Conditions: 150 mM KOAc, 10 mM MgCl2 and 150 mM bicine (pH 8.5), 24 C. The record gives the reactivity of an RNA of 177 nucleotides to 2A3 and DMS.

[RMDB]
RNA sequence: GGGAACGACUCGAGUAGAGUCGAAAAUCGUCGCAGAUAAUGAGCUUCCUGGACAAGCAGAACAUGCUUUUUGUGGAGACCGCCGACAUGCUGGCGCGCAUGUCUCGUGAAACUUUGGUUCGUGCUACCUAUGGGGUAUAUUCGUAUACCCCAUAGGAAAAGAAACAACAACAACAAC
Reactivity to 2A3 in 0.01 (KOAc 150mM, MgCl2 10mM, bicine 150mM(pH8.5), 24C), signal-to-noise 6, nucleotides 027 to 126: u040c020g040u030c040g040c050a050g030a110u110a120a130u210g040a040g030c020u050u000c020c020u020g040g040a030c040a070a010g000c010a010g030a100a050c040a090u070g030c010u060u050u030u060u100g120u070g040g000a020g020a060c020c010g030c020c020g030a020c010a020u060g010c010u070g040g030c010g000c010g020c040a010u030g040u010c020u020c040g080u100g070a080a040a040c050u060u080u130g070g020u100u070c030g030u050g030c020u050a110
Reactivity to DMS in 0.01 (KOAc 150mM, MgCl2 10mM, bicine 150mM(pH8.5), 24C), signal-to-noise 9, nucleotides 027 to 126: u010c060g020u000c080g020c080a080g010a080u000a090a100u010g010a110g010c070u000u000c020c010u000g000g000a070c150a050a050g010c020a050g000a100a100c160a080u010g010c040u000u000u000u000u000g020u000g000g010a090g000a080c070c050g010c050c070g010a050c050a020u000g000c050u010g010g000c060g020c140g010c040a020u010g000u000c010u000c060g020u000g000a090a080a070c130u000u010u000g000g010u010u000c030g010u000g010c040u000a150

2A3 adducts were read by reverse transcription with SuperScript II with manganese. The data come from the RNA Mapping Database (RMDB), library OK2TST. The 2A3 profile rests on 8,222 reads.